Conditions: 150 mM KOAc, 10 mM MgCl2 and 150 mM bicine (pH 8.5), 24 C. The record gives the reactivity of an RNA of 177 nucleotides to 2A3 and DMS.

RNA sequence: GGGAACGACUCGAGUAGAGUCGAAAACACUUGGAGUUCGCUCCAAGUGAAACCAUUGCCGAUUGGCAAUAAUACCGCAGGCGGUAAAGCGGAAGAAAUAAGAAAGCGAAGACUUCGGUCUUCGCAACUUUAACCAAUACUUCGGUAUUGGUUAAAGAAAAGAAACAACAACAACAAC
Reactivity to 2A3 in 0.01 (KOAc 150mM, MgCl2 10mM, bicine 150mM(pH8.5), 24C), signal-to-noise 6, nucleotides 027 to 126: c000a000c000u000u000g010g000a010g020u070u080c100g130c090u000c000c000a000a000g000u000g000a030a000a000c010c010a030u010u020g000c010c060g300a300u150u300g010g000c000a000a010u090a030a020u060a030c020c000g000c030a040g180g010c110g070g040u140a170a060a010g010c030g030g040a040a040g050a050a180a060u260a070a060g120a180a070a000g000c000g000a000a010g000a010c000u010u070c240g040g000u000c000u000u000c000g000c000a000a000
Reactivity to DMS in 0.01 (KOAc 150mM, MgCl2 10mM, bicine 150mM(pH8.5), 24C), signal-to-noise 4, nucleotides 027 to 126: c010a010c000u020u000g000g010a020g020u000u010c220g010c000u000c000c000a010a000g000u000g000a060a120a140c010c010a070u000u000g000c000c000g010a210u010u010g000g000c000a000a010u000a090a150u010a090c030c000g010c020a100g010g010c070g010g000u010a040a070a090g010c020g010g010a170a110g000a070a060a090u010a060a080g000a080a130a130g000c000g000a010a010g000a010c000u000u030c150g010g010u000c000u010u000c000g020c000a020a020